[RMDB]
RNA sequence: GGGAACGACUCGAGUAGAGUCGAAAAACAAGGCCGUUAUUGUCACGUCGCAUGAUAGCGCCUGGCUUGCCGCCUUCGAUCUGGCGGUCGCAGGCGUCAAGGUUCCUGCCAUCAUCGAUGUGCGUGAGCUAAUAUUUAGCUUCGGCUAAAUAUUAGCAAAAGAAACAACAACAACAAC
Reactivity to 2A3 in 0.01 (KOAc 150mM, MgCl2 10mM, bicine 150mM(pH8.5), 24C), signal-to-noise 9, nucleotides 027 to 126: a000c070a050a040g120g030c050c020g090u130u140a160u160u210g150u150c010a010c020g020u010c020g030c110a010u010g000a010u040a050g050c050g000c040c040u020g050g030c010u030u050g010c000c000g000c000c000u040u040c020g050a070u030c050u150g300g040c160g050g020u000c010g000c010a010g010g010c010g000u000c000a000a010g020g000u090u110c000c010u040g010c000c010a020u010c000a000u000c020g020a030u010g010u030g010c030g020u050g050a030
Reactivity to DMS in 0.01 (KOAc 150mM, MgCl2 10mM, bicine 150mM(pH8.5), 24C), signal-to-noise 7, nucleotides 027 to 126: a120c100a100a070g000g020c030c100g000u000u000a070u010u000g010u000c010a030c020g010u000c020g000c250a020u000g000a020u000a050g010c060g020c030c020u000g010g010c020u000u000g000c030c000g000c000c000u000u000c060g000a040u000c090u000g020g010c230g010g010u000c260g000c080a010g000g010c010g010u000c030a020a040g000g010u000u000c010c020u000g000c040c040a030u000c010a020u000c030g000a010u000g020u000g010c080g020u000g000a220

An RNA of 177 nucleotides, treated with 2A3 and DMS and read out base by base. For 2A3, 22,117 sequencing reads were counted. For DMS, 22,350 sequencing reads were counted. Conditions: 150 mM KOAc, 10 mM MgCl2 and 150 mM bicine (pH 8.5), 24 C. DMS adducts were read by reverse transcription with MarathonRT.